Structure probing data (2A3 and DMS) for a 177-nucleotide construct. Source: RMDB library TTRINS, as collected in RNAgym. The RNA was probed in 150 mM KOAc, 10 mM MgCl2 and 150 mM bicine (pH 8.5) at 24 C. The 2A3 profile rests on 7,533 reads. High DMS reactivity at an A or C suggests that its Watson-Crick edge is free. Reactivities are given for positions 27 through 126. 2A3 adducts were read by reverse transcription with SuperScript II with manganese.
[RMDB]
RNA sequence: GGGAACGACUCGAGUAGAGUCGAAAAGAUAUGGAAUGUGCAUACUACCCACCUCUACAUCUCCGAAGAACUUAAUCGGAAACGAUUAAGGGAGGAGCCAUAGAGAGGUAUGCACAUUCCUAAGUCACUAAUGUUCUCAGUUCGCUGAGAACAUUAGAAAAGAAACAACAACAACAAC
Reactivity to 2A3 in 0.01 (KOAc 150mM, MgCl2 10mM, bicine 150mM(pH8.5), 24C), signal-to-noise 2, nucleotides 027 to 126: g030a030u110a080u220g000g000a000a000u010g010u010g030c010a000u000a010c000u120a120c010c050c040a070c000c000u020c000u010a050c030a250u070c010u030c010c030g300a300a040g000a050a030c010u000u000a000a000u000c000g080g000a110a080a040c010g010a010u000u020a010a000g030g000g000a010g000g000a010g000c010c020a040u090a010g020a000g010a030g010g000u000a000u010g020c010a000c000a000u010u010c000c000u000a080a030g050u040c020a010
Reactivity to DMS in 0.01 (KOAc 150mM, MgCl2 10mM, bicine 150mM(pH8.5), 24C), signal-to-noise 4, nucleotides 027 to 126: g000a030u000a300u000g000g000a020a000u000g010u000g000c010a020u000a000c000u000a110c080c070c120a300c080c020u000c000u020a030c120a300u000c000u010c000c000g010a110a130g010a150a260c000u000u000a000a000u000c010g000g000a110a110a150c000g000a000u000u010a010a000g000g000g010a050g030g000a030g020c300c120a300u000a010g000a010g010a090g000g000u000a000u000g000c000a010c000a000u000u000c000c010u010a010a050g000u000c020a250